The record gives the reactivity of an RNA of 207 nucleotides to 2A3 and DMS.
For DMS the reverse transcriptase was MarathonRT.
Reactivities are given for positions 27 through 156.
Reactivities are rounded to 0.1 and cut off at 0 and 3.
Source: RMDB library OK3TST, as collected in RNAgym.
For 2A3, 816 sequencing reads were counted.

RNA sequence: GGGAACGACUCGAGUAGAGUCGAAAAGAUUUUGUCAGCGUCAUCCAAACUAAACAUCGACCAGAAUUAUCCAUCCGGGUUUAUAAAGCAAAUGGUAAUAAAUCCGGUUAUGAGCGCCAUGACAAUCCAGGAUGAGGAGGCCAAGAUGCAGAAGUUAACUACUCCUGAUAUUCGUAUCAGGAGUAGUAAAAGAAACAACAACAACAAC
Reactivity to 2A3 in 0.01 (KOAc 150mM, MgCl2 10mM, bicine 150mM(pH8.5), 24C), signal-to-noise 2, nucleotides 027 to 156: g030a010u050u070u090u150g030u060c080a040g050c000g040u020c010a070u030c080c050a040a110a120c030u090a050a070a050c060a060u080c050g080a040c040c020a020g080a100a090u090u030a020u150c040c030a010u040c010c010g000g010g000u020u040u000a020u000a030a090a040g040c040a120a140a040u240g100g020u080a070a050u010a010a030a000u000c000c000g000g020u000u010a060u040g000a020g070c040g030c170c050a060u160g010a000c000a000a000u040c040c000a060g070g000a060u010g030a020g000g050a000g000g000c000c000a020a050g020a020u140g020c030a010g050a230a000g090u010u150a000
Reactivity to DMS in 0.01 (KOAc 150mM, MgCl2 10mM, bicine 150mM(pH8.5), 24C), signal-to-noise 2, nucleotides 027 to 156: g010a150u000u010u000u010g030u030c020a100g000c020g040u010c010a130u010c060c050a140a110a220c050u010a080a110a090c030a070u010c020g010a080c040c020a120g000a130a090u010u000a060u000c070c050a110u010c020c010g040g030g010u010u000u000a050u000a040a120a280g030c050a040a070a090u000g030g050u000a090a070u000a010a010a040u010c010c010g020g000u000u010a020u000g010a100g000c090g020c010c050a100u000g010a040c040a020a090u000c050c040a070g000g010a130u000g010a050g000g000a090g020g010c030c020a020a070g020a060u010g020c000a080g020a100a140g000u000u000a050